[RMDB]
RNA sequence: GGGAACGACUCGAGUAGAGUCGAAAAACAGGUCUAACAGCAUUUGAGUGAUAAUUAGAACUAAAGUGGAGGAAUUUUUAUUUGAGAAGUUGAGCAGUGAGAGUCAAAAUCUUCUUAGGAGCUGUAGCAAACUAAGGCGUUUCGACGCCUUAGUUUGAAAAGAAACAACAACAACAAC
Reactivity to DMS in 0.01 (KOAc 150mM, MgCl2 10mM, bicine 150mM(pH8.5), 24C), signal-to-noise 1, nucleotides 027 to 126: a080c110a050g020g010u020c030u010a050a120c040a080g050c010a110u010u000u000g030a140g020u000g020a090u000a060a110u010u020a140g010a050a040c030u020a030a060a060g040u000g010g010a070g020g020a080a030u000u000u010u020u000a090u030u020u020g000a050g000a090a060g000u010u000g020a060g010c060a100g000u000g030a030g020a070g000u000c130a040a090a100a060u010c040u000u000c020u000u010a100g030g010a060g020c040u070g010u010a040g010